RNA sequence: GGGAACGACUCGAGUAGAGUCGAAAAACUUUUUGAUUCGUCAAAAAGUAACUACCGAGAAUGCGACUCGGUAUACGCAAAUAACCCUUGGAAAGAAGGGAACAAACUAACGUUUCGACGUUAGUAACGAUCAUAAGAGAUUCGUCUCUUAUGAUCGAAAAGAAACAACAACAACAAC
Reactivity to 2A3 in 0.01 (KOAc 150mM, MgCl2 10mM, bicine 150mM(pH8.5), 24C), signal-to-noise 9, nucleotides 027 to 126: a000c010u020u010u000u000u000g020a030u030u040c080g040u010c060a000a000a000a000a000g010u010a030a070c030u020a010c010c010g010a000g050a110a140u260g130c120g140a060c020u000c010g000g000u010a030u030a010c040g010c040a060a070a040u140a110a140c010c000c000u010u040g200g300a150a090a080g080a010a020g020g010g040a020a010c030a020a110a000c000u010a000a000c000g010u010u040u130c220g100a020c010g000u000u000a000g000u010a020a040
Reactivity to DMS in 0.01 (KOAc 150mM, MgCl2 10mM, bicine 150mM(pH8.5), 24C), signal-to-noise 8, nucleotides 027 to 126: a040c010u000u000u000u000u000g010a050u000u010c180g020u000c000a000a000a010a000a010g010u000a070a110c160u000a010c000c000g000a010g000a110a080u010g030c250g010a090c000u000c000g000g000u000a010u010a040c190g010c190a070a070a090u010a100a100c000c010c000u000u000g010g000a130a100a120g000a010a010g000g000g010a070a060c230a040a100a040c000u000a010a010c000g000u000u000u010c190g010a030c010g010u000u000a000g010u000a040a090